[RMDB]
Structure probing data (2A3 and DMS) for a 177-nucleotide construct. The RNA was probed in 150 mM KOAc, 10 mM MgCl2 and 150 mM bicine (pH 8.5) at 24 C. For 2A3 the reverse transcriptase was SuperScript II with manganese. It was measured as part of the RMDB library TTRDES. The DMS profile rests on 3,206 reads. DMS (dimethyl sulfate) methylates the pairing face of unpaired adenines and cytosines.
RNA sequence: GGGAACGACUCGAGUAGAGUCGAAAAGAUAUGGAAACCAUUACGGGAGUAUUCUAUUCGGAAACGAAUAGAAUACAUCGAUCGUACUGUGGUUUCCUAAGUCAAAAGUUGGAGUUCGCUCCAACAAGAAUGACAUAGGGUUCGCCCUAUGUCAUUCAAAAGAAACAACAACAACAAC
Reactivity to 2A3 in 0.01 (KOAc 150mM, MgCl2 10mM, bicine 150mM(pH8.5), 24C), signal-to-noise 3, nucleotides 027 to 126: g020a020u060a010u120g010g000a000a000a000c000c000a020u050u080a010c040g040g080g060a120g040u000a000u000u020c010u000a000u000u000c010g000g020a040a070a030c000g000a000a000u010a000g020a000a020u000a000c000a010u030c020g100a140u100c010g020u030a060c130u150g000u050g110g000u000u000u000c000c000u000a060a030g050u000c040a110a040a080a200g000u000u000g010g030a030g020u070u180c210g160c130u000c030c010a010a000c000a000a020
Reactivity to DMS in 0.01 (KOAc 150mM, MgCl2 10mM, bicine 150mM(pH8.5), 24C), signal-to-noise 4, nucleotides 027 to 126: g020a040u010a300u000g000g000a000a000a000c000c000a040u010u000a000c000g010g000g000a060g030u000a000u000u000c000u010a000u000u000c000g000g010a070a070a150c000g000a030a000u010a010g010a010a000u000a000c000a170u010c240g010a060u010c000g040u000a030c300u010g030u000g010g010u000u000u010c000c000u010a020a070g000u010c030a100a040a200a150g010u000u000g010g010a010g000u000u010c280g020c020u000c000c000a000a000c000a080a080